This 177-nucleotide RNA was probed chemically with DMS and 2A3. The reactions ran in a buffer of 150 mM KOAc, 10 mM MgCl2 and 150 mM bicine (pH 8.5), at 24 C. For 2A3 the reverse transcriptase was SuperScript II with manganese.
RNA sequence: GGGAACGACUCGAGUAGAGUCGAAAAUCAGCACUUAAAGUAGGCCGCCGGGGACACUCACCUUAGCCCGCGCGCUCCGAAUUUUAUGUAGUGUUGAUGUCGCACGCUUUAGAGGGGUGGGCUGUGUUGGAUAAGACAGUUUCGACUGUCUUAUCCAAAAAGAAACAACAACAACAAC
Reactivity to DMS in 0.01 (KOAc 150mM, MgCl2 10mM, bicine 150mM(pH8.5), 24C), signal-to-noise 5, nucleotides 027 to 126: u000c000a010g010c010a030c020u000u010a020a050a090g000u010a060g010g020c300c040g020c000c040g000g000g000g010a130c060a100c040u000c070a040c060c060u000u010a120g000c010c010c010g030c190g030c020g010c080u000c010c020g010a080a050u010u060u010u020a030u000g020u000a040g030u010g020u000u000g010a020u000g010u010c050g030c030a060c060g010c070u000u030u030a080g000a080g010g010g010g010u010g000g000g010c060u000g010u040g030u010
Reactivity to 2A3 in 0.01 (KOAc 150mM, MgCl2 10mM, bicine 150mM(pH8.5), 24C), signal-to-noise 3, nucleotides 027 to 126: u020c000a000g010c000a000c040u070u100a030a040a030g020u030a040g010g000c010c010g010c000c000g010g020g030g020a020c040a040c110u030c010a090c020c050u040u160a060g060c000c000c000g050c010g010c010g020c060u010c000c010g040a030a040u160u230u070u140a090u130g090u080a010g000u000g000u000u020g010a020u010g020u030c050g000c030a050c020g030c040u040u140u140a080g020a040g020g030g010g020u040g000g010g020c030u070g000u000g030u060